[RMDB]
RNA sequence: GGGAACGACUCGAGUAGAGUCGAAAAGAAAGAAAGAUGUGACUCGUGGACUUCCCUUUGUCAUCCUAUGCCUGAGAAUAUAUGAAGGAGGCUGGGAAGGCAAAGGGACGUUCAAUUGUCAUCACAAGUACUAUACAGAGUUCGCUCUGUAUAGUACAAAAGAAACAACAACAACAAC
Reactivity to DMS in 0.01 (KOAc 150mM, MgCl2 10mM, bicine 150mM(pH8.5), 24C), signal-to-noise 7, nucleotides 027 to 126: g000a090a090a110g000a090a090a090g000a110u020g030u000g000a020c030u000c180g020u000g000g000a020c010u000u000c000c000c000u000u000u000g000u000c010a050u000c000c010u000a010u030g010c000c000u000g010a210g010a140a110u040a130u030a120u040g020a190a160g000g000a030g000g000c000u000g000g000g000a010a020g010g010c010a000a010a000g000g000g000a000c030g000u000u010c000a020a050u010u000g000u000c020a050u010c090a070c180a070a090
Reactivity to 2A3 in 0.01 (KOAc 150mM, MgCl2 10mM, bicine 150mM(pH8.5), 24C), signal-to-noise 9, nucleotides 027 to 126: g100a020a090a010g120a040a090a010g090a110u140g020u020g030a010c020u040c100g050u020g000g000a000c000u010u010c000c000c000u000u000u000g000u000c000a010u010c000c010u060a090u300g010c000c000u100g030a100g090a250a030u210a060u090a070u280g090a120a060g150g110a010g020g000c010u010g010g010g000a020a030g000g000c000a000a000a000g000g010g000a000c000g000u000u000c000a000a010u020u030g010u010c010a020u090c010a020c010a090a090